[RMDB]
RNA sequence: GGGAACGACUCGAGUAGAGUCGAAAACGGAUGACGCAGGGUGAGACCCGGAUGGUCAUGACAGAGCGUGCCCGUGGCGCCGUGCUGCAGCGGAGUCAGUCCGGAAGCACGAUUGUGGCCAGCACGAAAAGGAAGCCACAUUCGUGUGGCUUCCUUUAAAAGAAACAACAACAACAAC
Reactivity to DMS in 0.01 (KOAc 150mM, MgCl2 10mM, bicine 150mM(pH8.5), 24C), signal-to-noise 3, nucleotides 027 to 126: c110g020g030a020u000g000a000c070g000c030a100g000g010g000u020g010a020g000a300c020c020c000g000g000a140u020g060g000u000c020a060u010g020a110c130a170g040a090g050c010g000u000g020c020c060c030g010u020g030g000c020g040c020c010g020u000g000c030u010g010c190a150g000c030g000g000a070g000u040c230a050g020u020c070c020g000g010a200a080g020c050a000c010g000a110u040u000g030u000g010g020c020c040a050g000c030a050c070g010a100
Reactivity to 2A3 in 0.01 (KOAc 150mM, MgCl2 10mM, bicine 150mM(pH8.5), 24C), signal-to-noise 2, nucleotides 027 to 126: c000g000g030a010u090g040a000c030g000c130a070g000g030g080u110g050a050g070a060c000c000c020g000g110a080u160g040g020u000c000a010u060g010a010c080a040g150a030g030c000g000u040g010c000c070c050g090u100g000g000c000g000c000c010g000u010g040c060u050g000c000a110g100c050g000g000a040g100u300c130a010g090u000c060c000g000g030a040a000g000c040a000c020g030a010u000u120g040u000g090g000c000c030a030g000c020a020c000g020a030

This 177-nucleotide RNA was probed chemically with DMS and 2A3. Values cover nucleotides 27 to 126. For 2A3, 827 sequencing reads were counted. The reactions ran in a buffer of 150 mM KOAc, 10 mM MgCl2 and 150 mM bicine (pH 8.5), at 24 C.